[RMDB]
The data come from the RNA Mapping Database (RMDB), libraries RFM100 and RFMREP. Chemical mapping of a 177-nucleotide RNA with 2A3 and DMS. The RNA was probed in 150 mM KOAc, 10 mM MgCl2 and 150 mM bicine (pH 8.5) at 24 C. Values cover nucleotides 27 to 126.
RNA sequence: GGGAACGACUCGAGUAGAGUCGAAAAACGCCUGGACUACGGUCCAGGCGAAGUGUGGGGUGCAGAGCUUGUGCGAUUGGCGCUUGACGACGAAGAGCGCCACACGCGAGCUCUUCAUCCCAACCAAGGUUUACAUUACGUUCGCGUAAUGUAAACCAAAAGAAACAACAACAACAAC
Reactivity to 2A3 in 0.01 (KOAc 150mM, MgCl2 10mM, bicine 150mM(pH8.5), 24C), signal-to-noise 5, nucleotides 027 to 126: a000c010g000c000c000u010g020g010a010c010u030a040c290g110g000u010c000c000a000g000g010c000g000a000a030g020u140g050u060g000g000g000g000u010g000c040a000g000a010g020c010u050u050g020u080g070c020g210a280u030u100g000g010c000g030c010u020u050g070a140c230g010a030c100g090a170a090g000a060g040c000g010c000c010a010c000a000c000g000c000g000a020g000c000u000c000u010u000c000a000u010c000c000c000a000a000c010c010a040a070
Reactivity to DMS in 0.01 (KOAc 150mM, MgCl2 10mM, bicine 150mM(pH8.5), 24C), signal-to-noise 2, nucleotides 027 to 126: a090c010g060c010c000u010g000g000a010c000u000a070c180g030g000u000c000c010a000g020g000c000g000a010a040g010u010g010u000g000g000g000g030u000g020c040a010g000a030g030c000u000u000g020u020g000c020g010a200u030u000g010g040c000g000c000u000u000g020a240c080g000a230c300g020a100a300g030a000g010c000g000c030c000a000c040a020c000g020c040g020a010g000c000u000c000u010u000c000a010u000c000c010c000a020a060c010c060a160a060